Conditions: 150 mM KOAc, 10 mM MgCl2 and 150 mM bicine (pH 8.5), 24 C. This 177-nucleotide RNA was probed chemically with DMS and 2A3. For 2A3 the reverse transcriptase was SuperScript II with manganese. For DMS the reverse transcriptase was MarathonRT. High DMS reactivity at an A or C suggests that its Watson-Crick edge is free. For 2A3, 1,365 sequencing reads were counted. The DMS profile rests on 1,021 reads. The data come from the RNA Mapping Database (RMDB), library OK2TRN.
RNA sequence: GGGAACGACUCGAGUAGAGUCGAAAAUGCGCCAUGCGGAAAGCCGGAUACCAGCCGACCAAUGGCGAGCAUCAGGUAAGACGAAGAGAGCGUGAACAUGGCGUUGCCAAUGACGCACAACGCCACCAUUACUGUUGCGGUUCGCCGCAACAGUAAUAAAAGAAACAACAACAACAAC
Reactivity to DMS in 0.01 (KOAc 150mM, MgCl2 10mM, bicine 150mM(pH8.5), 24C), signal-to-noise 2, nucleotides 027 to 126: u000g000c030g010c000c000a000u010g010c100g000g010a130a190a160g030c050c050g010g030a140u010a090c110c060a190g000c010c050g000a300c050c050a060a040u020g000g030c000g010a150g000c050a030u000c040a060g000g000u030a080a020g000a150c150g010a050a110g000a170g010a090g000c030g000u000g000a110a070c130a090u030g010g000c000g000u010u010g000c060c080a090a090u000g000a040c160g050c020a130c030a050a000c010g030c010c010a080c230c190
Reactivity to 2A3 in 0.01 (KOAc 150mM, MgCl2 10mM, bicine 150mM(pH8.5), 24C), signal-to-noise 2, nucleotides 027 to 126: u090g000c040g040c000c000a050u070g000c090g020g040a040a050a000g020c000c000g030g020a020u070a200c070c040a030g000c010c010g010a060c010c060a070a080u130g040g000c000g000a030g010c010a020u030c030a000g100g040u070a110a000g090a060c040g050a070a050g100a010g020a010g030c000g020u070g040a030a010c080a060u130g000g000c010g010u000u000g100c000c000a060a210u230g070a100c070g030c070a020c040a030a010c020g000c020c000a010c020c040